Chemical mapping of a 207-nucleotide RNA with 2A3 and DMS. The reactions ran in a buffer of 150 mM KOAc, 10 mM MgCl2 and 150 mM bicine (pH 8.5), at 24 C. Reactivities are given for positions 27 through 156. For 2A3 the reverse transcriptase was SuperScript II with manganese. The DMS profile rests on 2,963 reads. The data come from the RNA Mapping Database (RMDB), library OK3TST.

RNA sequence: GGGAACGACUCGAGUAGAGUCGAAAAAGGCUGGCUCGUCAGUUUAGUGAUGACACUCGGGGUGAUGUUUGCGGUGAUGCGGACUGCCCAACAGCAAGCGGGUUAUACGCGCCAAGUUGAUGCCGCCUUACCGGUAACCAGCUGGAUUGCGAUGAGCAAACACACACCAGUUCGCUGGUGUGUGUUUAAAAGAAACAACAACAACAAC
Reactivity to 2A3 in 0.01 (KOAc 150mM, MgCl2 10mM, bicine 150mM(pH8.5), 24C), signal-to-noise 2, nucleotides 027 to 156: a000g020g060c000u010g020g030c000u030c100g070u060c050a020g000u020u040u100a020g000u000g060a140u020g020a040c030a020c090u090c020g010g010g000g010u090g010a150u070g060u030u060u060g060c020g060g060u170g020a040u090g000c020g000g020a080c020u040g010c030c050c000a030a020c020a030g100c020a040a020g030c090g010g000g010u100u100a230u020a100c060g000c010g000c070c020a150a050g010u020u000g040a070u070g010c000c000g050c000c000u000u020a020c000c000g000g040u040a060a050c070c000a020g050c000u040g020g000a100u000u080g010c020g000a100u100g030a010g030c000
Reactivity to DMS in 0.01 (KOAc 150mM, MgCl2 10mM, bicine 150mM(pH8.5), 24C), signal-to-noise 1, nucleotides 027 to 156: a070g000g030c010u000g030g020c010u000c050g010u000c010a050g040u000u000u000a080g010u000g000a100u000g040a230c070a060c040u030c040g020g000g010g060u000g010a040u010g000u000u000u000g010c050g020g010u000g030a060u000g000c020g030g030a080c050u000g000c010c040c020a050a070c040a110g030c020a080a100g040c040g000g010g030u000u010a170u010a150c080g000c010g000c040c020a040a180g010u010u000g050a100u010g000c000c000g000c030c080u000u010a030c050c000g030g020u020a090a170c010c010a100g010c010u000g000g000a170u010u010g010c020g000a150u000g010a180g000c150